[RMDB]
RNA sequence: GGGAACGACUCGAGUAGAGUCGAAAAAGAGGGACUUCAACUGAUACUAGGCCCGCCGGAACAGGUGCCAGCGACACGUUCCGGGGCCGAGAAAGCGACACACUGGCUACGCCCGUAGAAGGCAUAUGACCACAGCAGUGGACGGGGGUUCGAUUCCGGACUAUAGUAGGUUCGCCUACUAUAGUCCAAAAGAAACAACAACAACAAC
Reactivity to 2A3 in 0.01 (KOAc 150mM, MgCl2 10mM, bicine 150mM(pH8.5), 24C), signal-to-noise 2, nucleotides 027 to 156: a000g050a070g010g040g020a030c040u030u030c100a110a060c060u090g020a040u090a200c020u060a070g000g030c000c010c020g100c090c030g000g000a010a000c030a070g120g080u040g040c060c080a070g040c070g120a040c010a000c020g000u000u000c000c000g000g000g000g000c000c000g020a030g010a000a040a000g050c020g050a000c000a000c010a010c080u020g020g000c000u030a020c050g020c070c000c000g020u060a050g050a160a030g010g000c020a050u100a050u270g050a040c010c000a010c020a040g040c010a030g000u030g020g000a030c050g000g000g000g000g000u070u040c000g040a080u080u000c070c080
Reactivity to DMS in 0.01 (KOAc 150mM, MgCl2 10mM, bicine 150mM(pH8.5), 24C), signal-to-noise 1, nucleotides 027 to 156: a080g010a080g000g080g000a140c020u000u010c020a110a110c060u000g030a160u020a080c030u010a100g020g030c010c000c040g090c090c000g000g020a040a030c000a100g040g040u000g020c020c030a240g000c070g010a090c040a090c010g000u010u000c010c000g040g040g000g000c010c010g020a030g020a040a080a060g020c010g010a050c070a030c060a060c060u010g010g030c000u000a060c090g000c020c020c030g000u010a170g000a100a050g000g010c000a080u010a000u000g010a090c000c040a110c000a110g040c040a070g060u000g000g010a100c020g020g010g000g020g000u000u000c030g000a190u000u000c040c040